[RMDB]
RNA sequence: GGGAACGACUCGAGUAGAGUCGAAAAGAUAUGGACUGCCAAAUAACGAAGAACCAUACCGGCGGAGUUCUAUUCGGAAACGAAUAGAGACUCCGCCGGUAUGGGGAGUUAUUGGCAGUCCUAAGUCCGUACAUUACUUGUUCGCAAGUAAUGUACGAAAAGAAACAACAACAACAAC
Reactivity to DMS in 0.01 (KOAc 150mM, MgCl2 10mM, bicine 150mM(pH8.5), 24C), signal-to-noise 1, nucleotides 027 to 126: g020a030u020a300u010g000g000a030c000u010g000c010c010a020a040a070u000a010a010c000g010a140a230g010a170a300c010c000a010u010a010c000c000g030g010c000g000g000a030g010u000u000c000u000a000u010u000c010g000g010a130a090a220c020g000a020a010u000a010g000a100g010a020c000u000c000c000g020c020c000g000g010u000a000u000g000g020g000g000a050g030u000u000a000u000u010g010g000c020a000g000u000c010c000u000a000a070g000u010c070
The data come from the RNA Mapping Database (RMDB), library TTRINS. This 177-nucleotide RNA was probed chemically with DMS. In probing experiments dimethyl sulfate is read out at A N1 and C N3, which are open when not base-paired. DMS adducts were read by reverse transcription with MarathonRT.